[RMDB]
This 177-nucleotide RNA was probed chemically with DMS and 2A3.
For DMS the reverse transcriptase was MarathonRT.
2A3 adducts were read by reverse transcription with SuperScript II with manganese.
The data come from the RNA Mapping Database (RMDB), library OK2TST.
RNA sequence: GGGAACGACUCGAGUAGAGUCGAAAAUGCGCCUUUGUUUGUGAAAUUGAUAUGGUGGGUCAGGUUCAGAAUGCAUAGUUGGAAGGAUACAGCAAUCCAUCUGUUAUGGCUUGUGGCAAAGGCGUACCGCUAGAUAAGGAUUCGUCCUUAUCUAGCGAAAAGAAACAACAACAACAAC
Reactivity to DMS in 0.01 (KOAc 150mM, MgCl2 10mM, bicine 150mM(pH8.5), 24C), signal-to-noise 6, nucleotides 027 to 126: u010g010c000g010c000c000u000u000u000g010u000u010u020g020u000g010a020a040a070u010u000g000a050u000a070u000g010g020u000g020g000g010u000c020a030g010g010u000u000c030a060g010a110a070u000g010c040a030u000a040g010u000u010g030g000a050a090g010g010a050u000a060c150a160g010c210a070a030u000c010c000a060u000c030u010g000u000u000a030u000g010g000c080u000u000g010u000g000g000c020a010a020a000g000g010c010g030u010a020c130
Reactivity to 2A3 in 0.01 (KOAc 150mM, MgCl2 10mM, bicine 150mM(pH8.5), 24C), signal-to-noise 6, nucleotides 027 to 126: u050g000c000g010c000c010u010u000u020g090u040u060u150g180u040g050a060a070a080u060u030g020a020u030a060u210g110g030u070g020g040g040u020c020a010g050g000u020u030c010a050g070a230a080u100g040c030a050u020a060g070u070u140g050g020a070a040g020g020a030u080a170c110a070g060c040a030a020u010c000c000a020u000c010u030g080u120u090a030u040g080g060c040u070u100g090u140g090g000c000a000a000a000g010g000c000g000u010a060c030